[RMDB]
Overview
The record gives the reactivity of an RNA of 207 nucleotides to DMS and 2A3. 2A3 adducts were read by reverse transcription with SuperScript II with manganese. The reactions ran in a buffer of 150 mM KOAc, 10 mM MgCl2 and 150 mM bicine (pH 8.5), at 24 C. Reactivities are given for positions 27 through 156. For 2A3, 1,052 sequencing reads were counted.

RNA sequence: GGGAACGACUCGAGUAGAGUCGAAAAUGAUGAUCCUUGAUAACAUGAAUGGGUGUCACUCAAUCAGUUGAAGGCCUUUAGACUAAACACUGAAAUUUCCUGGAGAAAAAGAAUUUCUGCUGGAGACUGCAGCAUAAACUCCUGCCUGCAGGCAUGAAAUACGCAAGUAAUUCGUUACUUGCGUAUUAAAAGAAACAACAACAACAAC
Reactivity to DMS in 0.01 (KOAc 150mM, MgCl2 10mM, bicine 150mM(pH8.5), 24C), signal-to-noise 1, nucleotides 027 to 156: u010g010a060u010g000a090u010c010c010u010u000g010a230u000a090a100c030a130u000g010a170a110u000g000g010g000u000g000u000c030a110c060u020c060a100a120u000c050a050g010u000u000g000a180a180g030g000c020c020u000u000u000a060g010a060c020u000a120a080a160c100a080c060u000g000a020a070a080u000u000u000c000c000u020g000g000a120g000a050a080a110a050a170g020a160a120u000u000u000c000u000g050c030u000g020g010a170g000a060c060u000g000c000a030g020c020a090u000a080a050a080c100u010c030c060u000g050c060c010u010g000c060a040g010g000c030a080u030g010a110
Reactivity to 2A3 in 0.01 (KOAc 150mM, MgCl2 10mM, bicine 150mM(pH8.5), 24C), signal-to-noise 2, nucleotides 027 to 156: u080g020a030u010g010a010u020c000c000u060u080g090a120u080a190a040c080a100u140g150a110a030u040g020g060g000u060g020u060c040a040c020u030c030a060a070u030c030a060g040u040u030g060a130a020g060g010c010c030u110u110u140a050g010a030c020u050a030a180a000c040a010c090u010g050a050a110a220u030u020u000c050c000u050g090g050a040g060a050a030a010a050a040g050a050a100u080u090u030c040u060g110c040u030g000g000a020g010a090c020u000g000c000a000g010c010a010u130a120a110a060c020u090c030c020u010g080c000c000u040g050c030a020g040g020c010a060u130g080a000